[RMDB]
RNA sequence: GGGAACGACUCGAGUAGAGUCGAAAAACACGUAAGGCAGCCAUUUCUGUAUGAUUGACAUAGCCAUAGAGUGAUUUUAAUAACACUUGAUAGGUUAAUACUUUGCCGACAUGAUGGCAUAAUAUCGCCGGGACGGCUAUUUCGAUAGCCGUCCCGGAAAAGAAACAACAACAACAAC
Reactivity to 2A3 in 0.01 (KOAc 150mM, MgCl2 10mM, bicine 150mM(pH8.5), 24C), signal-to-noise 1, nucleotides 027 to 126: a160c130a100c130g130u260a100a110g000g000c000a000g000c030c000a060u080u140u000c200u010g070u000a130u200g060a040u040u030g070a110c010a060u010a040g020c000c000a000u000a040g010a000g000u000g060a090u000u000u000u300a170a300u120a170a000c000a000c000u000u000g000a000u300a070g030g030u000u100a110a000u100a100c040u000u130u110g200c100c090g010a000c000a010u000g000a000u000g000g050c000a000u170a030a030u170a000u200c040g000